[RMDB]
RNA sequence: GGGAACGACUCGAGUAGAGUCGAAAAUAGCAGGACAUAGCCGUUAUGCGCGAAGCGGUGUAGCGUCACUUUGAUGGCGGUACUGUGAAUUGAUGCAAGGUGUGGAGCGACCUUAAACAGUUCUGGUUUGACGGCUUUCAGUUCGCUGAAAGCCGAAGAUGGUACCAUCGUUCGCGAUGGUACCAUCAAAAGAAACAACAACAACAAC
Reactivity to 2A3 in 0.01 (KOAc 150mM, MgCl2 10mM, bicine 150mM(pH8.5), 24C), signal-to-noise 2, nucleotides 027 to 156: u160a020g020c050a030g020g010a050c030a060u070a040g000c010c010g040u050u070a080u180g090c080g000c070g050a030a010g010c030g020g010u070g020u090a050g080c020g040u040c010a000c090u180u170u210g100a160u040g080g010c020g030g000u020a020c020u000g000u010g100a050a050u120u110g090a070u080g060c020a030a040g000g000u050g050u070g000g040a010g000c030g020a040c000c010u100u240a130a060a010c030a010g000u000u040c040u050g050g030u040u040u110g040a010c000g000g000c000u000u010u000c000a000g000u000u090c180g010c090u000g000a000a000a000g000c000c000g000a000a000

The record gives the reactivity of an RNA of 207 nucleotides to 2A3. The reactions ran in a buffer of 150 mM KOAc, 10 mM MgCl2 and 150 mM bicine (pH 8.5), at 24 C. 2A3 adducts were read by reverse transcription with SuperScript II with manganese.